The record gives the reactivity of an RNA of 177 nucleotides to DMS and 2A3. 2A3 adducts were read by reverse transcription with SuperScript II with manganese.
RNA sequence: GGGAACGACUCGAGUAGAGUCGAAAAGAUAUGGAUAGCCCACAAGGACUAUGAAGUCGGAAACGAUGGAGUCUGUGGAGCUAUCCUAAGUCAAAGUUGAAGUAGUCCUUCGGGACUACUUCAACAAGAGACUACUUUUCUUCGGAAAAGUAGUCUCAAAAGAAACAACAACAACAAC
Reactivity to DMS in 0.01 (KOAc 150mM, MgCl2 10mM, bicine 150mM(pH8.5), 24C), signal-to-noise 1, nucleotides 027 to 126: g000a050u000a300u010g000g010a040u010a010g010c000c010c000a020c000a100a190g040g010a030c010u000a260u010g000a090a120g010u010c000g030g000a100a110a210c000g000a010u000g010g000a000g010u000c000u000g010u000g010g010a050g000c000u000a010u000c000c000u000a030a040g000u010c020a100a170a100g000u010u000g000a000a000g010u000a000g010u000c010c000u000u000c210g030g000g000a010c010u000a000c010u000u000c010a000a000c000a080a110
Reactivity to 2A3 in 0.01 (KOAc 150mM, MgCl2 10mM, bicine 150mM(pH8.5), 24C), signal-to-noise 2, nucleotides 027 to 126: g000a010u110a000u110g010g000a010u010a010g040c030c140c000a000c000a140a160g300g010a000c010u060a240u300g050a010a030g020u000c000g000g000a060a030a000c010g000a010u060g020g000a000g020u020c010u090g000u040g000g080a200g000c010u000a000u000c000c000u000a090a000g010u000c050a230a000a050g000u010u000g010a020a000g000u000a000g000u000c040c030u060u190c300g040g010g010a000c000u000a020c000u020u000c000a000a000c000a020a000
The data come from the RNA Mapping Database (RMDB), library TTRDEL. The reactions ran in a buffer of 150 mM KOAc, 10 mM MgCl2 and 150 mM bicine (pH 8.5), at 24 C. For DMS, 884 sequencing reads were counted. For 2A3, 1,674 sequencing reads were counted.